[RMDB]
The record gives the reactivity of an RNA of 207 nucleotides to 2A3.

RNA sequence: GGGAACGACUCGAGUAGAGUCGAAAAAUGGCGAUUGAUGGCGCACACAAACCUUACAAAUCAAAUAGUUAUGAGAGAUUUCGUUGCAAUCCAUCAGUCCACUAAUUGCGCUGCGUGUGCCCUCCCUGCAUCGAAGCCAGGUGAAACGCCAAUGAGCGACCCACAGAUGAUUCGUCAUCUGUGGGUCAAAAGAAACAACAACAACAAC
Reactivity to 2A3 in 0.01 (KOAc 150mM, MgCl2 10mM, bicine 150mM(pH8.5), 24C), signal-to-noise 1, nucleotides 027 to 156: a000u040g040g000c080g020a010u000u060g000a000u130g000g000c000g000c040a000c010a000c000a030a150a040c010c000u080u180a110c070a070a180a100u220c030a010a060a110u170a070g020u090u080a060u100g040a120g030a000g010a090u000u000u090c100g020u130u040g000c010a040a020u050c000c000a000u090c080a020g110u070c060c000a010c150u170a020a010u010u230g000c040g070c160u070g020c100g020u010g010u030g000c000c030c000u010c000c010c000u000g000c050a020u050c140g150a100a010g000c000c000a000g000g010u030g000a080a220a000c010g000c000c090a030a060u030g000a020g180c010

2A3 adducts were read by reverse transcription with SuperScript II with manganese.